[RMDB]
RNA sequence: GGGAACGACUCGAGUAGAGUCGAAAAACCUGAUAUGGAUGGAACGGUGCCAGAGAUAUAAAAAAUAUGGGGAUUACGUGCCUCGGGUCAAUGAGGUUUUAGGCAUGCGCCAUUCAAUAGUGGCAGGAUUAGCGAGGCGGCAACGCGAGAGUGUGGCGUUAAGCCGUUUGUUCGCAAACGGCUUAACAAAAGAAACAACAACAACAAC
Reactivity to DMS in 0.01 (KOAc 150mM, MgCl2 10mM, bicine 150mM(pH8.5), 24C), signal-to-noise 1, nucleotides 027 to 156: a080c010c010u000g050a150u000a200u000g000g020a020u010g020g000a060a080c030g020g020u000g000c000c020a130g030a180g000a100u000a080u010a030a060a120a090a040a120u000a070u000g000g020g050g030a190u000u000a070c100g030u000g020c010c020u000c030g020g000g010u000c110a090a040u010g000a130g010g000u000u000u000u000a070g010g000c000a000u000g000c050g000c000c010a030u000u000c010a090a100u000a130g040u030g000g000c000a140g000g010a080u000u010a050g000c000g010a090g040g030c000g000g010c020a030a010c000g000c020g010a090g000a090g050u000g000u000g000g000c110
Reactivity to 2A3 in 0.01 (KOAc 150mM, MgCl2 10mM, bicine 150mM(pH8.5), 24C), signal-to-noise 2, nucleotides 027 to 156: a000c040c020u060g020a080u090a110u180g030g010a000u020g020g000a020a090c020g040g000u040g010c060c040a040g000a000g040a070u070a030u140a150a100a000a010a000a020u260a120u180g000g000g000g030a040u090u140a060c100g000u060g030c000c000u010c040g040g050g000u100c120a050a050u190g050a060g000g010u010u030u070u220a050g010g000c030a020u100g080c030g030c000c000a040u060u050c070a080a020u110a070g030u060g060g000c020a030g030g070a030u040u030a010g020c050g030a000g030g040c020g000g010c010a020a000c030g020c000g030a030g020a010g020u040g010u030g040g030c020